Source: RMDB library RNAMAK, as collected in RNAgym. Structure probing data (DMS and 2A3) for a 207-nucleotide construct. Reactivities are given for positions 27 through 156. DMS adducts were read by reverse transcription with MarathonRT. Conditions: 150 mM KOAc, 10 mM MgCl2 and 150 mM bicine (pH 8.5), 24 C. The 2A3 profile rests on 4,285 reads.
RNA sequence: GGGAACGACUCGAGUAGAGUCGAAAACACGCGUUCGCGCGUGGUAAGCACCUUUGUGGUACACCCUUGUCAGCGUAUACUCCGAGCCCAUUGGGCUCGUAAAUACGCUUGGAUUUAGAAGUGUACCACUCUGGUUUAAUCGCAGCUUCGGCUGCAAACAGUAAUCGAUGUUCGCAUCGAUUACUGUAAAAGAAACAACAACAACAAC
Reactivity to DMS in 0.01 (KOAc 150mM, MgCl2 10mM, bicine 150mM(pH8.5), 24C), signal-to-noise 1, nucleotides 027 to 156: c000a010c010g010c000g040u010u010c300g030c020g000c000g050u000g000g010u000a040a210g000c150a060c020c000u000u010u000g010u000g000g000u000a000c000a060c000c020c000u020u010g030u020c030a080g000c000g040u000a000u000a030c020u000c300c000g000a030g020c000c010c000a300u010u000g080g030g010c000u010c000g000u000a070a270a020u000a000c000g000c020u000u010g030g010a040u000u000u000a040g020a090a110g010u000g030u000a010c030c000a000c000u000c010u000g000g010u000u000u000a050a140u000c100g050c010a020g010c010u000u000c300g030g020c010u000g010c000a010a050
Reactivity to 2A3 in 0.01 (KOAc 150mM, MgCl2 10mM, bicine 150mM(pH8.5), 24C), signal-to-noise 5, nucleotides 027 to 156: c010a000c000g010c000g010u030u080c240g020c000g000c010g120u030g010g030u090a050a040g120c070a020c020c000u010u000u010g000u000g000g000u010a000c000a000c000c030c000u000u000g030u020c010a000g000c010g020u010a000u010a070c070u040c090c010g010a000g010c010c010c030a290u230u300g000g000g000c000u000c000g000u000a020a010a000u000a000c000g000c000u020u060g030g010a010u250u160u160a050g010a160a020g010u010g000u000a000c000c000a000c000u000c000u000g020g030u020u040u160a130a110u180c090g010c010a000g010c000u090u110c240g130g000c000u000g000c000a030a030